[RMDB]
RNA sequence: GGGAACGACUCGAGUAGAGUCGAAAACAAUCAACAAUAUGGUUUGUGUAGUUAUGCUGAAAAUCGUUGAGGUUGUAUUGAAUAGGUUAACCGUAAGACCUUAAGUUGAAAAACUUUAAAAUUAAUCAAAAUCAUGUACACUUCGGUGUACAUGAAAGUACGUAAUUGGCUUCGGCCAAUUACGUACAAAAGAAACAACAACAACAAC
Reactivity to 2A3 in 0.01 (KOAc 150mM, MgCl2 10mM, bicine 150mM(pH8.5), 24C), signal-to-noise 1, nucleotides 027 to 156: c080a000a020u090c000a010a040c000a060a080u020a030u280g090g050u060u070u060g090u040g000u030a070g060u120u130a180u140g050c060u130g060a030a000a040a090u090c060g010u010u020g010a020g130g000u000u000g040u000a070u050u090g140a130a160u080a060g000g000u030u030a110a040c050c060g060u060a000a070g060a050c000c000u000u040a010a010g020u020u020g020a070a100a000a000a000c030u030u060u060a040a040a040a060u170u210a040a110u120c020a020a100a070a050u020c000a000u000g000u000a000c020a000c010u000u010c120g120g000u020g000u000a000c000a000u000g000a000a000a000